This 177-nucleotide RNA was probed chemically with DMS and 2A3. 2A3 is a SHAPE reagent: it acylates the 2'-hydroxyl of flexible nucleotides of all four kinds. 2A3 adducts were read by reverse transcription with SuperScript II with manganese.

[RMDB]
RNA sequence: GGGAACGACUCGAGUAGAGUCGAAAAACGCAUAUGCUGACGCUACGGCGUCAGCAUAUGCGAACCGGCAGUUGCCUGUUGAUCCGCCGCAAUUAUGAUGGACGAAUCACAGUCAACUGUUGGCAAAUCCGAUAUUUGAAUUCGUUCAAAUAUCGGAAAAAGAAACAACAACAACAAC
Reactivity to DMS in 0.01 (KOAc 150mM, MgCl2 10mM, bicine 150mM(pH8.5), 24C), signal-to-noise 1, nucleotides 027 to 126: a130c020g060c000a000u010a000u000g010c000u000g000a040c030g010c000u000a110c180g030g050c000g000u000c000a040g000c010a000u000a000u000g010c000g020a010a020c020c000g010g000c000a020g000u000u000g020c110c000u000g020u020u000g010a010u000c010c010g010c000c000g020c020a110a150u000u020a080u000g000a120u010g010g010a090c020g010a030a000u000c000a010c000a020g000u000c000a000a020c000u000g000u000u000g000g000c100a100a080a120
Reactivity to 2A3 in 0.01 (KOAc 150mM, MgCl2 10mM, bicine 150mM(pH8.5), 24C), signal-to-noise 4, nucleotides 027 to 126: a000c010g000c000a010u000a000u010g000c010u000g000a020c000g000c040u060a040c300g110g000c000g000u000c000a000g000c000a000u010a000u000g000c010g000a000a000c000c000g010g000c000a010g000u020u000g000c000c000u020g040u100u130g050a000u000c020c000g000c020c000g060c060a070a120u270u170a160u300g200a170u190g020g040a100c010g010a010a010u010c000a010c010a010g000u000c000a000a000c010u000g000u010u010g010g000c040a060a030a070